[RMDB]
RNA sequence: GGGAACGACUCGAGUAGAGUCGAAAAGCCGUAUGGUCGAGUGUCCCCCCGGAGGGAGAGAACCACGCGGAGAAGGCGGAAAAAUCACCUCCAGAGGACCCCUUCAGCGAACAGAAGAGCCCCGCACAUCGGAUCGCGUUCGCGCGAUCCAAAAGAAACAACAACAACAAC
Reactivity to DMS in 0.01 (KOAc 150mM, MgCl2 10mM, bicine 150mM(pH8.5), 24C), signal-to-noise 3, nucleotides 027 to 129: g010c000c000g090u010a010u030g010g030u060c000g000a080g060u090g070u000c120c030c000c080c050c030g030g010a100g010g030g050a150g000a090g000a190a050c080c050a090c000g050c080g020g000a090g000a030a110g000g040c040g020g030a070a110a000a090a090u040c000a160c080c000u050c060c010a150g000a100g030g000a190c150c070c050c000u020u090c030a110g000c010g010a060a010c070a000g060a050a120g050a100g000c000c000c000c000g060c140a180c080a140u060c110
Reactivity to 2A3 in 0.01 (KOAc 150mM, MgCl2 10mM, bicine 150mM(pH8.5), 24C), signal-to-noise 3, nucleotides 027 to 129: g040c000c020g050u100a090u190g020g000u050c030g020a050g050u070g080u040c000c000c000c030c010c050g030g060a050g000g030g010a220g000a030g030a020a020c010c030a030c050g040c000g040g140a110g050a070a000g060g000c030g010g060a010a010a050a030a100u030c040a070c030c000u020c000c060a000g040a070g070g000a040c000c000c000c000u050u040c000a010g020c020g000a010a000c000a070g180a180a000g000a030g020c020c000c030c000g050c000a140c010a060u170c040